About this RNA
Chemical mapping of a 177-nucleotide RNA with 2A3 and DMS. For DMS, 1,240 sequencing reads were counted. For 2A3 the reverse transcriptase was SuperScript II with manganese. The RNA was probed in 150 mM KOAc, 10 mM MgCl2 and 150 mM bicine (pH 8.5) at 24 C. Reactivities are given for positions 27 through 126. For DMS the reverse transcriptase was MarathonRT. It was measured as part of the RMDB library OK2TST.
RNA sequence: GGGAACGACUCGAGUAGAGUCGAAAAGUCGGAUACGACCUCCCGCUGCUGAUCGGGCUGCUGGUCAUGUUCCUGUCCACCUGCAUCUUCGCCUUCGCAGAGAACUACGGGACGCUGUUCGCCGCGCACUACUCAGCUGCUUCGGCAGCUGAGUAGUAAAAGAAACAACAACAACAAC
Reactivity to 2A3 in 0.01 (KOAc 150mM, MgCl2 10mM, bicine 150mM(pH8.5), 24C), signal-to-noise 1, nucleotides 027 to 126: g000u000c020g070g080a170u190a300c090g000a030c020c000u020c000c010c000g040c050u040g000c010u030g020a080u060c030g000g000g000c050u090g010c000u070g000g030u030c030a060u090g040u060u040c000c050u020g060u050c010c010a040c010c000u000g030c030a070u040c050u090u100c050g050c050c000u120u120c030g080c050a030g030a010g030a070a000c020u090a030c040g010g000g030a010c020g020c030u060g030u030u050c040g090c030c000g050c040g020c050
Reactivity to DMS in 0.01 (KOAc 150mM, MgCl2 10mM, bicine 150mM(pH8.5), 24C), signal-to-noise 2, nucleotides 027 to 126: g010u010c030g020g000a190u010a140c030g010a050c060c060u000c000c020c000g030c150u000g000c060u000g000a050u010c150g030g000g020c050u000g030c030u000g020g010u000c040a100u000g010u000u000c010c010u000g010u000c070c030a160c050c010u000g030c000a080u010c070u000u030c150g030c040c050u020u000c030g030c060a090g020a050g000a070a070c090u000a120c060g000g020g010a060c090g030c080u010g010u000u000c050g010c050c050g010c100g000c160